[RMDB]
The data come from the RNA Mapping Database (RMDB), library OK1LIB. This 177-nucleotide RNA was probed chemically with 2A3.
RNA sequence: GGGAACGACUCGAGUAGAGUCGAAAAAAAGAAAGCCAGGGCGGUCCUCGCCAGCGCCAAGAGGCGUGGCGGAGCACACGCAAAAUUGGCUCGCUUCCUUCUCUGGCAUGCUACAUCUAGACCUCUACGCGACGAAAGCGUUCGCGCUUUCGUCGCGAAAAGAAACAACAACAACAAC
Reactivity to 2A3 in 0.01 (KOAc 150mM, MgCl2 10mM, bicine 150mM(pH8.5), 24C), signal-to-noise 1, nucleotides 027 to 126: a000a000a000g250a050a030a000g010c000c000a000g020g040g000c000g030g020u020c000c000u010c000g000c000c000a080g010c000g000c010c010a300a080g090a130g110g080c000g000u010g000g000c000g040g010a020g010c080a000c000a020c050g030c000a150a240a000a090u140u040g010g000c010u000c010g050c020u030u020c000c000u110u090c020u000c010u020g000g010c000a020u020g060c000u020a020c000a120u100c070u110a110g060a290c040c000u010c010u080a040
Conditions: 150 mM KOAc, 10 mM MgCl2 and 150 mM bicine (pH 8.5), 24 C.
Values cover nucleotides 27 to 126.